[RMDB]
RNA sequence: GGGAACGACUCGAGUAGAGUCGAAAAGAUAUGGACCGUAUAGGGAGCCUAUCGGAAACGAUGAGGCGAAGAACUAUCGGUCCUAAGUCAAAACCCCUUGAAUGAACUUCGGUUCAUUCAAGGGGAAGUGGUAAGGUAAGUUCGCUUACCUUACCACAAAAGAAACAACAACAACAAC
Reactivity to 2A3 in 0.01 (KOAc 150mM, MgCl2 10mM, bicine 150mM(pH8.5), 24C), signal-to-noise 4, nucleotides 027 to 126: g030a000u040a030u130g000g000a010c020c010g110u300a010u010a050g040g020g000a010g000c000c000u000a010u010c010g000g040a060a060a010c020g010a020u170g300a030g020g000c050g120a160a010g010a020a010c000u010a000u010c000g010g000u000c000c000u000a020a000g020u000c020a030a030a110a300c000c000c000c010u000u000g010a000a000u000g000a010a000c030u060u120c300g160g000u010u000c000a000u000u000c000a010a000g010g000g000g010a000a050
Reactivity to DMS in 0.01 (KOAc 150mM, MgCl2 10mM, bicine 150mM(pH8.5), 24C), signal-to-noise 2, nucleotides 027 to 126: g000a040u010a300u010g000g000a010c000c000g000u020a010u000a020g000g000g000a150g000c010c010u000a050u000c000g010g000a110a070a190c000g010a000u000g010a020g020g020c000g000a070a090g000a110a130c000u000a000u000c020g010g010u000c000c000u000a020a040g000u000c050a090a080a100a160c000c010c010c000u000u000g000a020a010u000g000a010a000c010u000u010c210g010g000u000u000c000a000u000u000c000a010a000g000g000g000g000a000a000
This 177-nucleotide RNA was probed chemically with 2A3 and DMS. 2A3 adducts were read by reverse transcription with SuperScript II with manganese. DMS (dimethyl sulfate) methylates the pairing face of unpaired adenines and cytosines. The DMS profile rests on 3,669 reads. The reactions ran in a buffer of 150 mM KOAc, 10 mM MgCl2 and 150 mM bicine (pH 8.5), at 24 C. Source: RMDB library TTRDEL, as collected in RNAgym.